[RMDB]
RNA sequence: GGGAACGACUCGAGUAGAGUCGAAAAGAUCACUAGCUACAUGCUGAUCUGCAUACUGUACAUGUGCUGAUCUGAUCAGUACUCUAGAGCUAGAUCACGAUCCUAGUCGAGUACACACUAGCGGUACCCUGCAGAGCUGUUUCGACAGCUCUGCAGGAAAAGAAACAACAACAACAAC
Reactivity to 2A3 in 0.01 (KOAc 150mM, MgCl2 10mM, bicine 150mM(pH8.5), 24C), signal-to-noise 1, nucleotides 027 to 126: g010a000u030c050a010c180u020a010g030c010u060a030c050a030u050g030c000u010g020a000u000c040u050g020c010a050u060a120c040u150g030u190a060c020a180u110g010u010g030c000u070g050a140u110c050u060g000a010u020c010a000g000u000a010c070u090c100u140a040g030a000g120c010u010a000g000a010u010c000a010c090g030a010u000c010c000u030a050g160u040c020g010a000g030u060a050c090a020c020a000c030u070a030g120c080g060g040u000a050c000
Reactivity to DMS in 0.01 (KOAc 150mM, MgCl2 10mM, bicine 150mM(pH8.5), 24C), signal-to-noise 1, nucleotides 027 to 126: g010a000u000c070a230c150u000a010g010c150u000a040c100a100u000g000c010u000g020a000u000c000u010g000c080a060u000a060c090u000g020u000a010c090a260u000g050u000g000c040u000g000a060u020c140u000g050a010u000c020a000g000u000a010c150u000c030u020a190g020a140g000c030u000a040g000a020u010c070a300c060g000a000u020c060c020u000a020g000u000c030g000a010g010u000a130c060a060c290a060c100u010a010g010c070g010g000u020a110c010